An RNA of 177 nucleotides, treated with 2A3 and DMS and read out base by base. For 2A3, 15,727 sequencing reads were counted. 2A3 adducts were read by reverse transcription with SuperScript II with manganese. For DMS the reverse transcriptase was MarathonRT.
[RMDB]
RNA sequence: GGGAACGACUCGAGUAGAGUCGAAAAGAUAUGGAUUCAAGGGAGCCAUGGGUCGGAAACGACCUAUGGCGACGAUCUUGAUCCUAAGUCGCAAACGUGAAUAAAAAGUUCGCUUUUUAUUCACGAAGCAUUAAUAUUACUUCGGUAAUAUUAAUGCAAAAGAAACAACAACAACAAC
Reactivity to 2A3 in 0.01 (KOAc 150mM, MgCl2 10mM, bicine 150mM(pH8.5), 24C), signal-to-noise 2, nucleotides 027 to 126: g010a000u040a020u120g000g010a050u300u290c010a000a000g000g000g000a010g000c000c000a000u010g000g000g010u000c010g020g020a050a050a040c000g000a000c000c010u000a000u000g000g000c010g000a020c000g000a000u000c010u000u010g000a000u000c000c000u020a130a040g040u010c020g010c150a090a070a100c020g010u000g010a000a010u010a010a020a010a010a010g030u080u160c280g170c050u040u010u000u020u020a010u000u010c000a000c010g020a030a010
Reactivity to DMS in 0.01 (KOAc 150mM, MgCl2 10mM, bicine 150mM(pH8.5), 24C), signal-to-noise 5, nucleotides 027 to 126: g010a030u000a300u010g000g000a010u000u010c000a020a010g000g000g010a040g020c000c000a000u000g000g010g010u000c000g010g010a070a080a130c010g000a010c010c000u000a000u000g000g010c010g000a020c210g000a030u000c000u000u000g000a050u000c000c010u010a040a120g000u000c010g000c200a070a090a220c010g010u000g000a010a010u000a000a000a000a010a020g010u000u010c260g010c000u000u000u000u000u000a010u000u000c000a000c000g000a040a090